[RMDB]
An RNA of 207 nucleotides, treated with 2A3 and DMS and read out base by base.
RNA sequence: GGGAACGACUCGAGUAGAGUCGAAAAGAGAUUAAGUUAGAUCCAUCCUCACAUCAAAUAAACUCAAGGGAGAUGGAAAAAAAACAUGUAUGUACUCGAAGAAAACUAGGGUGAAUUCCUCUUUAACCUUGGUGUAGAGAGAAUAGCUUCCUAACUGUAAUAUUAUGCGGUUCGCCGCAUAAUAUUAAAAAGAAACAACAACAACAAC
Reactivity to 2A3 in 0.01 (KOAc 150mM, MgCl2 10mM, bicine 150mM(pH8.5), 24C), signal-to-noise 2, nucleotides 027 to 156: g060a010g000a040u240u190a270a020g020u010u130a020g000a080u030c000c000a010u000c000c000u020c010a050c030a060u150c060a060a110a260u260a140a150a100c050u130c230a110a060g060g000g050a300g030a010u040g000g000a010a010a010a010a010a010a010a010c140a020u180g060u180a110u100g070u060a070c020u000c030g060a120a020g080a080a100a070a040c080u040a020g030g030g000u040g050a040a090u050u060c010c030u040c040u060u100u110a010a040c030c010u000u170g060g010u080g020u070a010g000a000g020a000g000a070a100u030a050g000c010u080u070c040c030u040a060a090c020u040g010
Reactivity to DMS in 0.01 (KOAc 150mM, MgCl2 10mM, bicine 150mM(pH8.5), 24C), signal-to-noise 1, nucleotides 027 to 156: g010a100g030a130u010u010a080a110g020u000u000a080g000a150u010c000c010a000u010c010c000u000c050a070c130a100u000c050a080a050a170u000a050a110a100c020u000c050a110a110g020g010g050a090g000a020u000g000g000a000a000a000a040a040a040a050a030c040a080u010g000u000a060u000g030u010a100c050u000c020g000a100a200g000a060a050a060a020c040u010a030g040g020g020u000g000a110a090u000u000c050c000u000c050u000u000u000a210a080c010c050u000u020g030g040u000g020u020a070g000a090g010a100g030a040a080u020a130g010c040u000u000c040c000u000a090a130c070u030g010

The reactions ran in a buffer of 150 mM KOAc, 10 mM MgCl2 and 150 mM bicine (pH 8.5), at 24 C.
DMS adducts were read by reverse transcription with MarathonRT.
For 2A3 the reverse transcriptase was SuperScript II with manganese.